[RMDB]
RNA sequence: GGGAACGACUCGAGUAGAGUCGAAAAAAGAAGCUGGAUGUGCUUUCAAACGACGUGCUGAAGAACUCACUGUCAUACACAGGAAGAUGCGGAGUUGUGGCAUCUGAGGAAGAGGAGCACCCGUGGCCAUGACACAUAGUUUCGACUAUGUGUCAUGAAAAGAAACAACAACAACAAC
Reactivity to DMS in 0.01 (KOAc 150mM, MgCl2 10mM, bicine 150mM(pH8.5), 24C), signal-to-noise 8, nucleotides 027 to 126: a090a070g010a080a070g020c040u010g010g010a100u000g010u010g010c030u010u000u010c070a070a120a130c060g010a150c150g020u000g010c030u010g010a110a100g010a090a110c040u000c030a120c050u010g010u000c090a080u010a080c160a050c070a060g010g010a130a050g000a040u000g010c050g000g010a090g010u000u000g010u000g010g000c010a010u000c030u010g010a120g010g010a090a110g000a100g010g000a050g000c030a030c010c040c020g010u010g020g010c120
Reactivity to 2A3 in 0.01 (KOAc 150mM, MgCl2 10mM, bicine 150mM(pH8.5), 24C), signal-to-noise 5, nucleotides 027 to 126: a000a000g110a040a000g030c070u070g080g060a120u110g030u060g050c020u070u090u100c070a150a100a020c050g040a010c030g010u020g000c020u050g050a150a070g060a110a040c000u000c020a060c040u050g030u020c030a030u100a210c120a010c030a070g090g050a090a060g070a070u110g070c060g050g060a100g070u080u080g060u090g080g000c010a040u040c050u040g010a020g010g030a080a040g040a030g080g040a000g010c010a010c000c010c010g070u090g030g000c000